[RMDB]
RNA sequence: GGGAACGACUCGAGUAGAGUCGAAAAUAAGCCAUCGAUGCAAAUAGCAAUUGAUAUGGGCGGCUCAAGAGGUGCUAUUGACGGUAUACCAACCCAAGAUCCUGUAUAUGGGUUACCUGCAUACUGGGCUUUAAAGUCCAUUCGUGGACUUUAAAGCAAAAGAAACAACAACAACAAC
Reactivity to DMS in 0.01 (KOAc 150mM, MgCl2 10mM, bicine 150mM(pH8.5), 24C), signal-to-noise 4, nucleotides 027 to 126: u020a090a130g020c010c010a060u020c020g000a040u010g000c050a100a070a040u010a130g030c050a080a060u020u020g010a050u020a080u020g020g000g000c030g000g000c170u010c050a060a060g020a100g010g020u020g010c030u020a040u000u010g000a070c130g000g010u000a070u040a090c090c090a050a060c010c010c010a010a040g000a040u020c020c020u020g000u010a040u020a070u030g020g000g000u000u020a040c050c030u020g010c020a020u010a020c090u000g000g000
Reactivity to 2A3 in 0.01 (KOAc 150mM, MgCl2 10mM, bicine 150mM(pH8.5), 24C), signal-to-noise 7, nucleotides 027 to 126: u160a050a010g040c020c010a030u040c040g030a020u060g010c020a040a070a190u140a160g030c040a100a220u050u080g020a010u040a100u200g070g010g010c020g010g000c020u020c050a070a050g030a050g090g050u060g030c010u070a060u100u110g080a060c060g010g000u050a050u050a070c030c040a060a020c010c010c020a030a020g050a100u070c020c030u100g070u100a080u030a040u180g020g000g000u010u020a030c030c020u020g010c020a010u060a110c050u090g000g060
The record gives the reactivity of an RNA of 177 nucleotides to DMS and 2A3.
Source: RMDB library OK1LIB, as collected in RNAgym.
Reactivities are given for positions 27 through 126.
As a SHAPE reagent, 2A3 marks flexible, mostly unpaired nucleotides at the ribose 2'-OH.
For 2A3, 6,111 sequencing reads were counted.
Conditions: 150 mM KOAc, 10 mM MgCl2 and 150 mM bicine (pH 8.5), 24 C.
2A3 adducts were read by reverse transcription with SuperScript II with manganese.